[RMDB]
RNA sequence: GGGAACGACUCGAGUAGAGUCGAAAAGAAAAUGGGCUCAAGGUGAGGGGUGCUAUCUGUGAUUGAGGGACAUGGUCAAUGGAAUUGUCUCACACAGAAAUCGCACCCGUCACCUUGGCCUGCUGAAUUGGUAUAAGUGAUUCGUCACUUAUACCAAAAAAGAAACAACAACAACAAC
Reactivity to 2A3 in 0.01 (KOAc 150mM, MgCl2 10mM, bicine 150mM(pH8.5), 24C), signal-to-noise 7, nucleotides 027 to 126: g150a010a090a020a060u260g010g000g000c060u070c200a000a000g000g010u010g000a000g020g000g000g000u010g000c010u020a020u020c000u000g040u000g050a190u100u140g070a200g020g020g010a010c000a010u070g060g090u260c120a100a130u130g160g030a100a130u070u020g030u010c000u000c000a010c000a000c000a000g010a070a120a020u090c040g000c000a000c000c000c000g000u000c000a000c000c000u010u000g000g000c000c000u010g000c010u030g010a120a120
Reactivity to DMS in 0.01 (KOAc 150mM, MgCl2 10mM, bicine 150mM(pH8.5), 24C), signal-to-noise 9, nucleotides 027 to 126: g010a060a050a100a090u010g000g000g000c010u020c020a010a000g000g020u000g010a020g000g000g010g020u000g010c010u000a300u000c000u000g010u000g010a240u000u000g010a100g010g010g000a020c010a020u000g010g020u020c260a100a120u010g010g010a090a110u010u000g010u000c000u000c000a200c010a000c000a010g010a010a040a090u020c300g000c000a000c000c000c000g000u000c000a000c010c000u000u000g000g010c000c000u000g000c090u000g000a100a170